Chemical mapping of a 177-nucleotide RNA with DMS and 2A3. The 2A3 profile rests on 602 reads. The data come from the RNA Mapping Database (RMDB), library OK1LIB. As a SHAPE reagent, 2A3 marks flexible, mostly unpaired nucleotides at the ribose 2'-OH.
[RMDB]
RNA sequence: GGGAACGACUCGAGUAGAGUCGAAAACGUCGUGAACUAGCGACAAUGCCGUAGAUCUAUCGUUAUCUAACCGAAACAUCGUGACUAGUCGUAGAAUAGAACCAGGAGAGGCCGCUGUCAAACAAAGACGGGGUCUCAGUUUCGACUGAGGCCCCGUAAAAGAAACAACAACAACAAC
Reactivity to DMS in 0.01 (KOAc 150mM, MgCl2 10mM, bicine 150mM(pH8.5), 24C), signal-to-noise 1, nucleotides 027 to 126: c260g020u000c010g040u000g030a080a070c120u000a230g000c000g010a080c040a050a210u040g000c050c040g050u010a000g000a000u000c070u040a080u000c100g000u030u000a050u070c060u080a080a110c140c010g000a150a030a010c170a080u010c040g000u000g000a080c000u020a050g000u060c000g000u080a020g020a080a040u000a050g010a100a140c180c070a070g000g000a060g050a020g000g000c010c010g010c010u000g000u000c000a040a040a090c100a040a020a050g020
Reactivity to 2A3 in 0.01 (KOAc 150mM, MgCl2 10mM, bicine 150mM(pH8.5), 24C), signal-to-noise 1, nucleotides 027 to 126: c130g010u000c000g010u020g080a140a050c010u050a080g020c010g010a020c030a000a050u070g020c000c030g000u030a040g030a110u000c020u050a080u040c080g070u090u060a030u020c000u010a010a000c020c020g040a060a000a000c090a130u160c030g010u080g020a060c010u000a000g010u000c000g080u040a000g030a080a040u060a040g050a050a000c000c000a000g010g000a010g000a000g010g000c000c000g000c000u000g000u030c100a070a060a120c040a130a130a000g050